[RMDB]
RNA sequence: GGGAACGACUCGAGUAGAGUCGAAAAAGUGGUAUCUACUAGUCAGGGGCUGGGAGCUGUAGUUAUCCCCAAAUAUAUCAUUGCAAUUGCAGACUUAAUAGAGGAGUUUGUGGCUGAUGACUGUAUCAAGAUAGUGACGGUUCGCCGUCACUAUCUUAAAAGAAACAACAACAACAAC
Reactivity to DMS in 0.01 (KOAc 150mM, MgCl2 10mM, bicine 150mM(pH8.5), 24C), signal-to-noise 1, nucleotides 027 to 126: a050g000u000g020g000u010a030u000c030u000a050c090u000a090g010u010c050a050g020g000g010g010c080u010g000g000g000a060g010c020u020g020u000a050g020u000u000a090u000c040c010c000c120a080a070a040u010a050u000a050u010c020a030u000u000g000c060a090a120u000u010g010c020a020g010a030c040u000u010a090a140u000a140g060a150g010g000a030g020u000u000u000g060u000g010g010c030u000g000a050u000g010a090c140u010g020u010a090u000c170
Reactivity to 2A3 in 0.01 (KOAc 150mM, MgCl2 10mM, bicine 150mM(pH8.5), 24C), signal-to-noise 1, nucleotides 027 to 126: a000g100u090g060g020u080a080u070c040u040a050c030u070a010g070u090c100a010g070g030g040g000c040u060g030g010g020a000g000c000u000g010u040a000g030u030u070a070u070c000c000c000c000a000a110a000u070a000u010a000u010c010a030u030u100g010c030a040a140u070u180g000c030a010g010a030c000u000u180a140a140u120a300g050a050g210g060a050g000u000u050u000g050u050g000g000c020u060g010a010u030g010a000c070u030g000u020a060u110c020

Chemical mapping of a 177-nucleotide RNA with DMS and 2A3.
The RNA was probed in 150 mM KOAc, 10 mM MgCl2 and 150 mM bicine (pH 8.5) at 24 C.
For DMS the reverse transcriptase was MarathonRT.
2A3 adducts were read by reverse transcription with SuperScript II with manganese.
Reactivities are rounded to 0.1 and cut off at 0 and 3.